[RMDB]
Annotation: This 207-nucleotide RNA was probed chemically with 2A3 and DMS. 2A3 adducts were read by reverse transcription with SuperScript II with manganese. For DMS the reverse transcriptase was MarathonRT. The data come from the RNA Mapping Database (RMDB), library OK3TST.

RNA sequence: GGGAACGACUCGAGUAGAGUCGAAAAGUCCAUGCAUAUGUAUGCAGGUGCGUGUGUGCGUGGAUGUUGCACACCUCUGCACAGUGUUGUGUGUGGAGCACUCAUGGACGUGUUCAGAACACACACAUGUGCAUGCACAUAUGGCUUGCAUGUGCACGCCCUUAUAUUUAUUCGUAAAUAUAAGGGCAAAAGAAACAACAACAACAAC
Reactivity to 2A3 in 0.01 (KOAc 150mM, MgCl2 10mM, bicine 150mM(pH8.5), 24C), signal-to-noise 9, nucleotides 027 to 156: g070u010c010c000a020u030g000c000a010u010a010u050g020u050a010u070g010c000a010g100g000u020g020c040g000u060g000u000g000u010g010c050g040u150g130g140a220u210g150u170u210g010c000a000c000a000c000c010u020c010u020g030c010a000c010a040g170u040g020u300u150g010u020g010u000g010u030g100g000a000g000c000a000c000u070c060a280u250g140g050a060c100g010u000g010u000u000c040a060g210a300a000c000a000c000a000c000a000c010a040u010g000u000g000c010a010u100g050c010a010c000a020u260a110u110g210g010c010u010u030g000c000a000u000g000u000g000c010a000c070
Reactivity to DMS in 0.01 (KOAc 150mM, MgCl2 10mM, bicine 150mM(pH8.5), 24C), signal-to-noise 3, nucleotides 027 to 156: g010u010c010c010a110u020g010c010a030u000a030u010g040u000a040u010g000c010a120g040g010u010g000c040g060u000g000u000g010u010g010c020g080u010g040g000a100u010g010u000u010g010c010a210c040a050c050c040u000c030u000g000c010a040c010a060g020u000g040u010u000g020u000g040u020g010u000g000g010a040g000c020a030c030u010c050a200u000g030g020a130c150g030u000g000u000u010c000a190g020a130a080c030a020c000a040c020a050c010a030u000g020u010g000c010a060u000g000c000a040c030a060u000a090u010g030g020c050u010u000g000c020a050u000g030u000g000c020a070c080